[RMDB]
RNA sequence: GGGAACGACUCGAGUAGAGUCGAAAAGAAGGUCGAGUGCACGACCAGAGAGUGCGGUGAGGGACCGACAAAGAGUUCGAAUCGGAACGAACUACCGCAAACGAUCGACUGAAGAUCGAAGUGAGAAAUGAUGAUCAGCGUUCGCGCUGAUCAUCAUAAAAGAAACAACAACAACAAC
Reactivity to DMS in 0.01 (KOAc 150mM, MgCl2 10mM, bicine 150mM(pH8.5), 24C), signal-to-noise 1, nucleotides 027 to 126: g040a250a060g020g000u000c010g000a030g000u070g080c060a080c050g000a000c000c020a090g010a130g000a200g000u020g000c030g000g020u000g000a300g000g000g000a080c010c010g050a030c200a010a000a100g000a130g000u040u020c050g050a150a090u030c060g010g020a300a100c050g000a090a140c000u000a100c010c000g000c000a020a040a300c000g010a050u010c000g020a090c140u010g000a090a030g000a070u000c010g190a080a040g020u000g000a060g000a070a070
Reactivity to 2A3 in 0.01 (KOAc 150mM, MgCl2 10mM, bicine 150mM(pH8.5), 24C), signal-to-noise 1, nucleotides 027 to 126: g170a150a110g000g030u010c000g030a020g110u050g110c030a000c160g000a000c000c000a040g020a000g000a000g040u020g000c010g000g000u010g020a110g010g150g020a000c000c000g000a000c040a000a270a040g070a080g070u100u170c170g120a000a000u000c030g050g000a140a000c040g000a000a000c000u000a000c000c000g000c000a030a030a030c010g000a000u000c010g100a100c180u240g000a090a030g020a000u000c000g020a110a020g080u070g070a080g020a000a160